[RMDB]
Source: RMDB library M2PK50, as collected in RNAgym.
This 177-nucleotide RNA was probed chemically with 2A3 and DMS.
2A3 adducts were read by reverse transcription with SuperScript II with manganese.
The reactions ran in a buffer of 150 mM KOAc, 10 mM MgCl2 and 150 mM bicine (pH 8.5), at 24 C.
DMS adducts were read by reverse transcription with MarathonRT.
RNA sequence: GGGAACGACUCGAGUAGAGUCGAAAAUCGGUGGGGUUCGCCCCACCGAAAAGAGAGAAGUGAGAGAGUCGUCAGUGAACGAAAGUGCGAUCCCACGCCUCAAAAGAUGCGGCUUCGGCCGCAUCAAUCAGUAGUUGGAGUUCGCUCCAACUACUGAAAAAGAAACAACAACAACAAC
Reactivity to 2A3 in 0.01 (KOAc 150mM, MgCl2 10mM, bicine 150mM(pH8.5), 24C), signal-to-noise 1, nucleotides 027 to 126: u000c000g000g000u000g020g020g040g000u040u010c090g070c000c000c030c040a000c000c000g000a000a010a010a000g070a000g020a000g000a120a060g010u110g050a140g000a000g020a020g130u030c010g010u030c060a090g080u040g190a150a040c020g020a160a000a000g110u090g050c000g020a030u040c020c000c000a030c020g000c030c000u050c020a080a140a000a020g000a000u040g010c000g000g000c000u010u030c200g110g000c020c000g000c000a000u010c000a000a020
Reactivity to DMS in 0.01 (KOAc 150mM, MgCl2 10mM, bicine 150mM(pH8.5), 24C), signal-to-noise 2, nucleotides 027 to 126: u000c000g030g040u010g000g000g050g010u000u020c230g030c000c000c000c000a010c000c010g000a010a010a040a110g010a190g000a030g020a140a160g000u010g000a080g010a140g010a060g000u000c030g020u000c020a120g000u000g000a110a050c050g000a070a030a140g030u000g000c000g000a100u000c020c010c010a080c040g000c060c000u000c070a050a040a140a180g000a010u000g000c010g050g000c000u010u000c270g010g000c010c000g000c000a000u000c000a070a080